Source information
This 177-nucleotide RNA was probed chemically with DMS. Reactivities are given for positions 27 through 126. DMS (dimethyl sulfate) methylates the pairing face of unpaired adenines and cytosines. Conditions: 150 mM KOAc, 10 mM MgCl2 and 150 mM bicine (pH 8.5), 24 C.

RNA sequence: GGGAACGACUCGAGUAGAGUCGAAAAAAAAUGGCUGUGAGGAACUACUGUCUUCACGCAGUAAGCGUCUAGCCAUGGCGUUAGUAUGAGUGUCGUGCAGCCUCCAGCCUCGAAAAACCGUCAGAAAUCUUAUGGGAGAGUUCGCUCUCCCAUAAGAAAAAGAAACAACAACAACAAC
Reactivity to DMS in 0.01 (KOAc 150mM, MgCl2 10mM, bicine 150mM(pH8.5), 24C), signal-to-noise 1, nucleotides 027 to 126: a070a020a040a100u010g000g010c030u000g010u020g010a030g000g000a110a010c030u050a300c000u030g000u000c020u000u000c010a010c010g010c050a050g000u000a090a040g010c000g000u010c000u010a040g000c290c240a070u000g020g000c000g010u000u000a100g020u010a070u000g010a060g010u000g010u010c000g010u000g000c010a040g000c010c000u010c030c000a000g030c010c000u010c090g000a000a050a080a050a050c060c050g000u000c080a130g010a140a040a100